[RMDB]
RNA sequence: GGGAACGACUCGAGUAGAGUCGAAAAAGUUCGCGCUUCCGUGAAAAGCGAAAAUCGGACGGUGGCUGCAAGUCGCAUCGCAAAACCGCGGCAAGUGGAGUUAGCGAGAGGAGGCUGGGUUUUGGCUAGAACACACGGUACUUCGGUACCGUGUGAAGUAACCGUAUAGAUUCGUCUAUACGGUUACAAAAGAAACAACAACAACAAC
Reactivity to DMS in 0.01 (KOAc 150mM, MgCl2 10mM, bicine 150mM(pH8.5), 24C), signal-to-noise 2, nucleotides 027 to 156: a080g000u000u010c010g030c090g000c040u030u000c020c060g020u000g000a030a040a030a040g000c010g000a060a060a080a120u020c050g040g010a080c020g000g010u000g010g040c060u000g000c050a050a080g020u010c040g000c000a160u000c030g000c050a050a070a090a150c040c030g010c030g020g000c060a050a090g020u000g030g010a100g000u010u000a120g000c040g020a060g000a110g020g000a090g020g030c020u000g010g020g010u000u000u000u010g020g030c010u000a110g000a070a230c000a020c000a010c020g030g010u010a010c000u010u000c290g030g010u000a000c000c010g020u000g000u000g000a000a100
Reactivity to 2A3 in 0.01 (KOAc 150mM, MgCl2 10mM, bicine 150mM(pH8.5), 24C), signal-to-noise 2, nucleotides 027 to 156: a000g050u060u050c020g010c010g010c040u070u000c050c040g060u070g090a030a030a030a000g020c040g050a070a040a010a100u100c050g000g030a000c020g040g010u060g020g030c060u070g000c070a060a060g020u060c040g000c060a080u030c020g010c060a050a060a020a010c050c080g020c010g070g030c140a110a010g030u050g050g020a070g020u050u060a020g020c040g030a030g000a030g050g020a020g000g040c050u050g020g040g000u010u070u080u080g020g020c010u040a050g080a150a010c010a000c000a000c020g000g000u000a000c000u050u050c170g100g010u000a000c000c000g020u000g000u000g000a000a000

Source information
Structure probing data (DMS and 2A3) for a 207-nucleotide construct. Source: RMDB library M2RFPK, as collected in RNAgym. For DMS, 4,136 sequencing reads were counted. Conditions: 150 mM KOAc, 10 mM MgCl2 and 150 mM bicine (pH 8.5), 24 C.